[RMDB]
RNA sequence: GGGAACGACUCGAGUAGAGUCGAAAAGAUAUGGAGACUAAGGACACGCCUGUACCAGUCAACAGCCACCCAUCGGAAACGAUGGUGUGGACAUGACUGACAGGCGUGUCCUUAGUCUCCUAAGUCAGUUUAUUCUUUGGUUCGCCAAAGAAUAAACAAAAGAAACAACAACAACAAC
Reactivity to DMS in 0.01 (KOAc 150mM, MgCl2 10mM, bicine 150mM(pH8.5), 24C), signal-to-noise 1, nucleotides 027 to 126: g030a050u000a300u000g020g010a030g040a010c000u000a000a000g000g000a040c010a010c000g000c000c010u000g010u000a180c300c020a000g020u000c000a040a140c300a210g010c030c000a000c000c000c010a010u000c000g030g000a140a120a180c000g000a000u000g010g010u030g020u000g000g000a030c180a060u010g000a000c010u000g000a040c030a000g000g020c010g000u000g010u000c000c010u000u010a000g010u000c000u000c000c030u000a010a060g030u000c040a180